[RMDB]
Structure probing data (DMS and 2A3) for a 177-nucleotide construct. The RNA was probed in 150 mM KOAc, 10 mM MgCl2 and 150 mM bicine (pH 8.5) at 24 C. DMS adducts were read by reverse transcription with MarathonRT. The 2A3 profile rests on 9,360 reads. Source: RMDB library OK1LIB, as collected in RNAgym. For 2A3 the reverse transcriptase was SuperScript II with manganese.
RNA sequence: GGGAACGACUCGAGUAGAGUCGAAAAUUGCGAUAAACUUUCAACGCCUUCGUAGUCAAUAGUUUUAUCGUCGUUCAUUAUAUCCUUUAGUUUGGAACGAAUUUGGUAACGAAGCAUGUUAUCGUUAGAUUUACGGAUAUUUCGAUAUCCGUAAAUCAAAAGAAACAACAACAACAAC
Reactivity to DMS in 0.01 (KOAc 150mM, MgCl2 10mM, bicine 150mM(pH8.5), 24C), signal-to-noise 6, nucleotides 027 to 126: u030u010g010c000g000a010u000a000a000a030c040u000u020u030c180a090a130c120g000c140c070u000u010c050g010u000a170g010u000c080a030a080u010a050g020u010u020u030u020a020u020c040g020u000c030g010u000u000c060a080u020u050a080u020a110u020c060c050u000u010u020a090g020u000u000u020g010g030a000a020c020g010a050a080u020u050u030g000g000u010a050a030c020g000a050a080g010c170a110u010g000u000u000a060u000c020g010u020u010a110
Reactivity to 2A3 in 0.01 (KOAc 150mM, MgCl2 10mM, bicine 150mM(pH8.5), 24C), signal-to-noise 9, nucleotides 027 to 126: u090u110g000c010g010a020u040a040a130a080c050u090u180u160c140a130a080c130g050c030c020u050u050c040g050u030a110g050u040c030a040a070u050a160g120u050u070u150u240a160u160c100g030u000c000g000u000u000c010a050u050u260a100u070a090u290c060c000u150u150u040a140g080u090u210u160g120g010a020a010c010g010a070a100u060u040u070g050g000u020a010a020c000g010a010a010g030c060a070u190g010u020u020a080u010c000g020u020u040a030